[RMDB]
RNA sequence: GGGAACGACUCGAGUAGAGUCGAAAAGUAUUUCCUUUAAAAUGUAAUACAGAUGAAGGAAAUAUCCAUUUUUAGGCUCAGGGCAGCAGAAAGUAAGGAAGUCCUCACUUUAAUAGGAUUCUCACCCACCCCAAGGUGUCUUGCGCGUCUUUGACAGGAAUAGUAUGCUGUUCGCAGCAUACUAUUCAAAAGAAACAACAACAACAAC
Reactivity to DMS in 0.01 (KOAc 150mM, MgCl2 10mM, bicine 150mM(pH8.5), 24C), signal-to-noise 2, nucleotides 027 to 156: g000u000a030u000u000u000c010c000u020u020u000a020a010a180a200u000g020u010a170a140u000a300c040a120g040a190u000g000a020a020g010g000a020a030a020u000a040u000c020c060a180u010u000u050u010u000a060g010g030c010u000c060a080g020g030g020c010a080g030c080a090g000a060a060a060g010u000a100a110g000g060a080a180g020u000c010c030u000c110a030c060u010u010u000a070a110u010a080g000g010a130u000u000c030u010c040a130c010c020c020a070c060c000c020c020a100a210g010g020u010g010u010c000u010u000g000c020g010c080g000u000c030u000u000u000g020a230c210a110g010
Reactivity to 2A3 in 0.01 (KOAc 150mM, MgCl2 10mM, bicine 150mM(pH8.5), 24C), signal-to-noise 3, nucleotides 027 to 156: g020u010a000u020u000u010c010c000u040u000u020a230a270a100a060u090g010u070a080a100u210a230c060a020g120a070u070g020a090a000g010g000a000a010a000u020a020u000c010c010a020u050u050u030u070u220a050g030g000c020u010c030a000g000g030g000c020a070g000c020a020g120a090a050a020g040u170a030a040g010g040a000a050g110u060c020c000u040c000a100c050u160u230u060a120a110u110a100g030g020a040u060u000c040u050c080a080c000c040c010a040c000c010c010c020a000a030g040g010u020g020u010c020u040u100g010c060g000c020g030u000c020u070u090u060g070a060c050a020g160
Structure probing data (DMS and 2A3) for a 207-nucleotide construct. Reactivities are rounded to 0.1 and cut off at 0 and 3. For DMS, 2,147 sequencing reads were counted. The 2A3 profile rests on 1,759 reads. The RNA was probed in 150 mM KOAc, 10 mM MgCl2 and 150 mM bicine (pH 8.5) at 24 C.